[RMDB]
The data come from the RNA Mapping Database (RMDB), library OK3TST. An RNA of 207 nucleotides, treated with 2A3 and DMS and read out base by base. The reactions ran in a buffer of 150 mM KOAc, 10 mM MgCl2 and 150 mM bicine (pH 8.5), at 24 C.
RNA sequence: GGGAACGACUCGAGUAGAGUCGAAAAGUGUGAAGUGAGCCUCCCCCUUACGAGCACGAAUUACAUGGGAGUGUUAACAUUACUGGGCGCCAGGAGCCCUACCUGGACAAGUAGCGAAGUACAGCCCGCGUAUGAGCUACGACUAAUUACGGGCACACGUACGUAGGUAUUUCGAUACCUACGUACGAAAAGAAACAACAACAACAAC
Reactivity to 2A3 in 0.01 (KOAc 150mM, MgCl2 10mM, bicine 150mM(pH8.5), 24C), signal-to-noise 3, nucleotides 027 to 156: g100u120g000u020g100a060a000g000u030g020a070g030c020c040u030c010c000c000c000c020u040u040a050c050g020a020g000c020a060c070g080a080a080u190u030a090c030a100u110g030g000g060a100g000u050g030u090u050a120a000c070a080u070u190a120c120u110g160g000g000c070g020c000c020a010g000g010a060g010c000c020c000u000a000c010c000u000g010g060a040c030a150a050g000u010a000g000c010g070a080a000g000u020a020c010a010g040c000c000c000g020c020g030u020a090u170g030a050g000c020u000a000c010g030a030c030u120a180a070u050u050a060c090g000g000g000c010a010c010a000
Reactivity to DMS in 0.01 (KOAc 150mM, MgCl2 10mM, bicine 150mM(pH8.5), 24C), signal-to-noise 2, nucleotides 027 to 156: g050u010g030u000g030a070a190g000u010g000a110g040c020c020u010c030c010c020c300c010u000u000a040c000g000a300g000c020a050c050g020a110a080u010u000a110c050a150u000g000g000g000a120g020u000g010u000u000a030a070c040a100u000u010a040c020u000g000g030g030c000g030c040c020a060g000g000a130g020c000c010c020u000a030c000c000u000g030g020a090c040a090a140g030u010a030g010c030g010a080a170g010u000a040c000a060g000c010c030c000g020c110g010u000a010u000g010a300g010c020u000a020c030g020a180c100u010a060a150u000u000a110c100g010g020g010c000a130c060a140